Chemical mapping of a 177-nucleotide RNA with 2A3 and DMS. For 2A3, 700 sequencing reads were counted. The DMS profile rests on 666 reads.

[RMDB]
RNA sequence: GGGAACGACUCGAGUAGAGUCGAAAAUUAUGACACUUGAUUUAUUGAAGGACAUUAAAUUUGUUAUACCUGCUCUACAGCAUGCAUUUAUGAAACAUAAGGGCGGUGAUUCAACUGACUUCAUAGCGCAGUUUUAGUAGUUCGCUACUAAAACUGCAAAAGAAACAACAACAACAAC
Reactivity to 2A3 in 0.01 (KOAc 150mM, MgCl2 10mM, bicine 150mM(pH8.5), 24C), signal-to-noise 1, nucleotides 027 to 126: u180u060a140u090g100a020c050a030c150u080u090g070a060u190u040u300a120u110u140g020a030a000g040g000a010c040a000u000u250a000a180a040u150u080u040g040u060u070a030u060a090c000c050u100g040c010u040c010u000a100c070a050g010c020a010u080g040c000a010u020u110u120a070u150g050a130a000a060c010a010u060a070a000g000g000g000c000g040g000u040g050a050u000u100c010a010a000c020u030g000a000c000u000u000c030a020u040a040g060c040
Reactivity to DMS in 0.01 (KOAc 150mM, MgCl2 10mM, bicine 150mM(pH8.5), 24C), signal-to-noise 1, nucleotides 027 to 126: u010u020a110u010g000a090c090a060c280u010u010g000a070u030u000u000a160u010u000g010a040a060g010g000a110c050a100u000u030a030a090a150u010u010u000g010u000u020a130u000a040c050c020u000g060c000u000c040u000a030c130a080g010c020a000u000g000c130a030u000u000u000a020u010g000a100a060a030c060a100u020a060a070g000g000g010c020g000g010u000g000a110u020u000c130a010a060c170u000g010a210c030u000u000c020a040u000a070g000c180